The data come from the RNA Mapping Database (RMDB), library OK2TST. An RNA of 177 nucleotides, treated with DMS and 2A3 and read out base by base.
[RMDB]
RNA sequence: GGGAACGACUCGAGUAGAGUCGAAAAUGCUUCGCCUCUGGCUGUAUCGGUUGUACGUAAUGCAUCUAAUAGCGACGUUUUACCAUGAUCAACAUGCCCCAUGACCGUAACUACAGGUGGUCGUGAAGACCUCACGGAAAUUCGUUUCCGUGAGGUCAAAAGAAACAACAACAACAAC
Reactivity to DMS in 0.01 (KOAc 150mM, MgCl2 10mM, bicine 150mM(pH8.5), 24C), signal-to-noise 2, nucleotides 027 to 126: u000g000c100u000u000c030g040c020c010u000c060u000g010g020c020u010g020u000a040u010c020g010g030u000u020g030u010a110c050g000u000a110a070u000g000c030a070u010c040u000a070a140u000a090g030c020g000a060c050g000u000u000u000u000a050c190c000a040u000g000a090u010c180a070a100c050a020u020g020c030c010c030c010a040u010g010a030c040c000g010u010a070a100c140u010a040c230a060g000g050u000g010g000u000c030g020u000g000a120a130
Reactivity to 2A3 in 0.01 (KOAc 150mM, MgCl2 10mM, bicine 150mM(pH8.5), 24C), signal-to-noise 2, nucleotides 027 to 126: u060g030c030u030u060c000g010c000c000u040c030u040g080g000c030u000g040u080a030u140c040g010g040u050u070g040u140a040c020g010u020a020a070u070g010c020a000u010c020u130a090a110u100a120g040c000g020a020c010g010u000u010u030u060a060c040c020a010u060g010a090u090c040a040a140c000a030u060g030c000c000c000c020a010u010g010a010c000c010g070u060a130a110c030u090a140c100a020g190g040u060g020g000u060c010g030u030g060a010a020

Conditions: 150 mM KOAc, 10 mM MgCl2 and 150 mM bicine (pH 8.5), 24 C. DMS adducts were read by reverse transcription with MarathonRT. As a SHAPE reagent, 2A3 marks flexible, mostly unpaired nucleotides at the ribose 2'-OH.